[RMDB]
RNA sequence: GGGAACGACUCGAGUAGAGUCGAAAAGUUCUAUCUUCUUAUUCAAGGGGUGGUGUAAUCGUCUAUCACUCAAUCGAAUGCAAGGAAUAUUUCGAGGUAGACAUGGAAUUUACCGAACGUGGGUAUAACCAUUUAAGACCUUCGGGUCUUAAAUGGUAAAAGAAACAACAACAACAAC
Reactivity to 2A3 in 0.01 (KOAc 150mM, MgCl2 10mM, bicine 150mM(pH8.5), 24C), signal-to-noise 1, nucleotides 027 to 126: g010u000u030c000u010a090u030c010u050u020c020u060u070a030u060u120c070a080a030g070g060g090g000u100g080g020u030g040u060a030a070u060c060g040u040c080u010a040u040c010a020c010u030c090a060a130u080c060g020a040a000u030g070c070a070a030g170g120a130a080u090a050u120u030u050c010g000a010g050g000u000a010g000a020c000a040u070g010g090a040a060u100u120u080a040c000c010g000a050a020c040g020u070g070g000g020u070a040u030a070
Reactivity to DMS in 0.01 (KOAc 150mM, MgCl2 10mM, bicine 150mM(pH8.5), 24C), signal-to-noise 2, nucleotides 027 to 126: g000u000u000c000u000a140u000c030u000u010c080u000u030a050u010u000c060a050a090g000g020g000g000u000g010g020u000g010u000a040a040u010c150g010u000c020u000a010u010c020a180c120u000c180a070a170u000c070g020a020a030u000g000c210a140a120g010g000a090a090u000a090u010u000u000c050g020a030g000g000u010a000g000a020c060a110u000g010g020a040a080u000u000u000a050c020c020g010a100a080c120g030u000g000g000g020u020a050u000a040